This 177-nucleotide RNA was probed chemically with 2A3 and DMS. Source: RMDB library VIROID, as collected in RNAgym. For 2A3, 5,424 sequencing reads were counted. The reactions ran in a buffer of 150 mM KOAc, 10 mM MgCl2 and 150 mM bicine (pH 8.5), at 24 C.

RNA sequence: GGGAACGACUCGAGUAGAGUCGAAAAGCUGACCCGCUCAGUUUGCCGCUAGUCGAGCGGACUUCAGGGAGUAGCCCCAAUCCUAAUCUGUUUUUAUCUAGGCUAGAAGGGGAUUGGGCCUCCAGGGGGUUAUAUUAAUGUUCGCAUUAAUAUAACCAAAAGAAACAACAACAACAAC
Reactivity to 2A3 in 0.01 (KOAc 150mM, MgCl2 10mM, bicine 150mM(pH8.5), 24C), signal-to-noise 3, nucleotides 027 to 126: g010c020u010g020a050c040c000c020g030c110u070c010a040g010u040u100u090g050c010c010g020c060u070a050g140u200c090g090a010g000c000g030g010a020c000u110u080c080a060g100g000g000a010g010u090a050g040c020c000c000c010a000a010u000c000c000u050a080a140u040c010u020g070u030u070u020u060u060a270u090c150u120a030g070g010c030u030a010g010a040a030g090g010g000g000a000u000u000g000g000g000c010c000u000c010c000a020g080g020g030
Reactivity to DMS in 0.01 (KOAc 150mM, MgCl2 10mM, bicine 150mM(pH8.5), 24C), signal-to-noise 5, nucleotides 027 to 126: g020c020u000g000a080c170c070c050g000c160u000c030a060g010u000u000u010g010c040c030g000c020u010a100g020u010c140g010a070g020c010g000g000a060c060u000u000c090a080g000g000g000a040g020u010a100g000c160c020c000c020a020a030u000c000c000u000a140a150u000c020u000g010u000u000u010u010u030a090u060c200u000a050g000g010c030u010a020g020a040a160g020g000g000g000a030u000u000g010g000g010c020c010u000c000c010a070g010g010g000